RNA sequence: GGGAACGACUCGAGUAGAGUCGAAAAAGUUAGGUUCGCUAUGGUGCAACUCUUUAAGGCAAUAACGAACUAAUUCUAAGCAAGUAAUGGAGAAAUGCCAGGGUCACUGUCUAGCCAUAAUAGUGCUGUAAGUGACUUAGAUUCGUCUAAGUCACAAGAGUAGCUUAUGCUUCGGCAUAAGCUACUCAAAAGAAACAACAACAACAAC
Reactivity to 2A3 in 0.01 (KOAc 150mM, MgCl2 10mM, bicine 150mM(pH8.5), 24C), signal-to-noise 4, nucleotides 027 to 156: a020g150u130u040a080g040g040u020u010c010g000c020u020a020u080g140g060u090g040c040a090a100c080u100c060u260u230u170a110a040g050g000c000a020a030u050a130a060c020g020a010a010c010u010a010a020u060u060c050u100a040a040g030c070a090a010g040u130a010a090u080g040g040a070g070a140a120a000u050g020c010c000a060g040g040g000u070c020a010c050u010g040u020c000u020a000g020c000c040a020u050a120a070u060a140g070u060g040c040u040g040u090a150a100g000u000g000a000c000u000u000a000g000a000u020u020c050g020u020c150u000a000a000g000u000c000a000c000a010a000
Reactivity to DMS in 0.01 (KOAc 150mM, MgCl2 10mM, bicine 150mM(pH8.5), 24C), signal-to-noise 2, nucleotides 027 to 156: a050g010u010u000a050g010g010u010u000c000g060c060u000a050u000g050g030u000g000c020a120a110c080u000c100u000u000u020a070a090g030g030c020a150a080u000a000a030c030g000a030a060c060u000a040a130u000u010c040u020a090a090g010c070a100a080g020u000a060a060u030g000g010a080g010a120a050a090u010g030c030c030a100g000g020g000u000c030a080c030u000g010u000c030u000a110g010c040c000a060u020a060a110u000a070g030u000g010c020u000g010u020a070a200g000u000g000a020c000u020u000a010g000a070u000u000c300g050u000c000u000a020a010g000u010c000a030c000a040a130
The data come from the RNA Mapping Database (RMDB), library M2RFPK. This 207-nucleotide RNA was probed chemically with 2A3 and DMS. For 2A3, 1,957 sequencing reads were counted. The RNA was probed in 150 mM KOAc, 10 mM MgCl2 and 150 mM bicine (pH 8.5) at 24 C. DMS adducts were read by reverse transcription with MarathonRT.